[RMDB]
RNA sequence: GGGAACGACUCGAGUAGAGUCGAAAAUGCGUCUCGGAAAGUGUCAUGCUUGGUAUUCUCAUUAUGUUCUUAAGUUUUUCCUCUUAGUGUUUGGUGAGAAUGGUGUGUUUUUCUAUAAGCACUUGCAAGGACGGUAUUCAUUCGUGAAUACCGUCCUAAAAGAAACAACAACAACAAC
Reactivity to 2A3 in 0.01 (KOAc 150mM, MgCl2 10mM, bicine 150mM(pH8.5), 24C), signal-to-noise 2, nucleotides 027 to 126: u030g000c010g010u050c040u040c000g030g040a080a070a000g130u070g100u110c000a010u140g030c040u170u040g040g010u140a060u010u020c030u050c000a000u010u020a070u130g060u140u000c030u060u050a080a130g040u020u020u000u090u100c000c010u000c010u060u030a030g010u060g070u040u020u130g050g000u010g000a060g000a020a020u140g000g150u080g000u000g020u010u010u020u000u000c040u000a040u040a110a050g000c030a030c070u010u050g020c050a030
Reactivity to DMS in 0.01 (KOAc 150mM, MgCl2 10mM, bicine 150mM(pH8.5), 24C), signal-to-noise 1, nucleotides 027 to 126: u020g000c000g010u000c000u000c000g010g010a020a080a050g010u010g020u030c090a020u020g000c010u000u010g000g010u010a020u000u000c020u020c000a090u000u010a020u020g000u020u000c050u010u050a080a070g000u000u000u000u000u000c040c020u020c030u000u010a090g000u010g000u000u000u000g030g000u020g020a020g000a000a050u010g060g010u000g000u010g000u000u000u000u000u000c040u010a060u020a040a080g040c040a030c020u000u000g000c140a130
The data come from the RNA Mapping Database (RMDB), library OK1LIB. The record gives the reactivity of an RNA of 177 nucleotides to 2A3 and DMS. The 2A3 profile rests on 887 reads. The reactions ran in a buffer of 150 mM KOAc, 10 mM MgCl2 and 150 mM bicine (pH 8.5), at 24 C. Reactivities are given for positions 27 through 126. For 2A3 the reverse transcriptase was SuperScript II with manganese. For DMS, 3,493 sequencing reads were counted.